[RMDB]
RNA sequence: GGGAACGACUCGAGUAGAGUCGAAAAAGAAACAGCUUCGGCUGAAGCUGCUUGAACAUGAUGCCGAAGACACCGUUCACGAAGCUUCGGAGCUACAACAUAUCCGAAGACGAAGGGUCGAACCGACACAACAAGAAUCGUUCGCGAUUCUUGUUGUAAAAGAAACAACAACAACAAC
Reactivity to DMS in 0.01 (KOAc 150mM, MgCl2 10mM, bicine 150mM(pH8.5), 24C), signal-to-noise 3, nucleotides 027 to 126: a080g000a150a040a060c070a060g000c020u000u000c000g050g030c150u010g000a060a070g000c030u000g050c080u020u020g000a070a090c110a080u000g000a150u000g020c000c010g000a050a010g000a090c110a040c090c090g000u010u000c050a100c100g000a120a170g000c010u000u000c000g010g010a030g000c130u010a050c290a060a060c170a100u010a150u000c010c000g010a030a030g010a040c060g010a140a120g010g000g000u000c000g010a040a180c020c030g020a090c140
Reactivity to 2A3 in 0.01 (KOAc 150mM, MgCl2 10mM, bicine 150mM(pH8.5), 24C), signal-to-noise 3, nucleotides 027 to 126: a020g080a000a050a000c040a030g000c010u000u000c000g090g000c080u070g030a020a000g050c030u090g020c040u060u160g070a070a030c040a140u110g000a030u050g030c010c030g020a010a000g020a020c040a020c020c070g050u080u020c030a070c120g070a040a010g020c000u010u010c000g020g010a020g030c050u230a090c060a220a020c030a110u210a030u120c000c000g010a010a010g010a020c010g040a070a050g010g030g000u020c030g010a010a020c010c000g030a020c030